[RMDB]
RNA sequence: GGGAACGACUCGAGUAGAGUCGAAAAGGGGUCUUUAUUGUCAGUGGAUUCUUUCGCUUGGAUUUAAUACUGAAGCCUCCACGGUAUUUGUCAGCGAAAGGUCCACUUGGAUUUAUAAAGACGGAGGCACCCAAAUCGCCCGAUUCGUCGGGCGAAAUCUAGGAAUUGGAUUCGUCCAAUUCCUAGAAAAAGAAACAACAACAACAAC
Reactivity to 2A3 in 0.01 (KOAc 150mM, MgCl2 10mM, bicine 150mM(pH8.5), 24C), signal-to-noise 1, nucleotides 027 to 156: g020g020g000g020u070c070u000u000u000a010u000u020g000u030c020a000g050u010g010g010a040u300u220c010u000u000u000c000g000c050u040u230g000g070a080u300u300u290a000a020u020a000c000u030g130a220a090g180c000c030u070c060c010a080c000g000g000u020a040u000u020u060g010u000c010a000g000c020g020a000a000a000g000g010u000c010c000a000c000u010u030g010g010a000u000u240u300a010u020a010a010a000g000a010c010g000g020a020g000g030c030a070c010c010c000a010a040a060u010c020g000c030c010c000g000a010u030u060c130g030u000c000g050g000g030c020g000a040a030a000
This 207-nucleotide RNA was probed chemically with 2A3. Reactivities are given for positions 27 through 156. Values are in units of 0.01, from 0 to 300, in steps of 10.